[RMDB]
RNA sequence: GGGAACGACUCGAGUAGAGUCGAAAAGUUCAUACAUUCAAGGACAAAUUAUCGUUUCAUUCUGUAUCGGUAUACUGUUGUUUAUCGGUUAUUCGGUUAUCGGGUUGAAAUAUAGCUUAGUAUUAGCACACUAGACCCUUUUCGAAGGGUCUAGUGUAAAAGAAACAACAACAACAAC
Reactivity to DMS in 0.01 (KOAc 150mM, MgCl2 10mM, bicine 150mM(pH8.5), 24C), signal-to-noise 2, nucleotides 027 to 126: g020u010u000c030a060u020a190c110a140u000u000c170a100a100g000g030a060c110a040a110a120u030u000a080u000c120g010u030u000u000c020a050u000u010c060u000g020u000a020u000c000g070g000u000a010u010a020c040u010g000u000u000g000u010u010u010a050u000c030g010g010u010u010a080u000u010c020g030g000u000u000a120u010c110g020g010g000u010u000g020a020a030a110u000a050u000a120g010c020u010u010a080g010u000a060u000u000a030g020c080